[RMDB]
Chemical mapping of a 207-nucleotide RNA with 2A3. Reactivities are given for positions 27 through 156. 2A3 adducts were read by reverse transcription with SuperScript II with manganese. For 2A3, 588 sequencing reads were counted. Source: RMDB library M2RFPK, as collected in RNAgym.
RNA sequence: GGGAACGACUCGAGUAGAGUCGAAAAGACGCCUUUAGAAGAAGUGGCUAGGGGGUAUUCCGGUGUGGGAUACUUAGUAAUAUGCAACGCUAAUUGCAUAAGAUUGUAGGACGGAAUUUACAGUCUUUAGAGAUAAGCACGUUCGCGUGCUUAUCAACCUAUCCCAGGACUUCGGUCCUGGGAUAGGAAAAGAAACAACAACAACAAC
Reactivity to 2A3 in 0.01 (KOAc 150mM, MgCl2 10mM, bicine 150mM(pH8.5), 24C), signal-to-noise 1, nucleotides 027 to 156: g070a030c000g040c010c000u060u090u070a140g040a180a040g010a030a050g090u000g040g010c070u110a070g000g000g000g000g080u000a010u020u020c010c010g000g060u130g020u210g100g000g010a010u000a040c000u020u060a020g000u050a010a210u010a060u060g010c010a000a040c070g030c200u090a120a090u010u020g030c000a000u040a040a020g030a040u050u120g010u020a040g000g080a050c070g030g020a100a040u030u100u130a080c010a000g030u000c000u080u050u110a060g080a000g000a030u000a000a000g010c000a000c000g010u010u060c200g000c000g040u000g000c000u000u000a000u000c000a000a010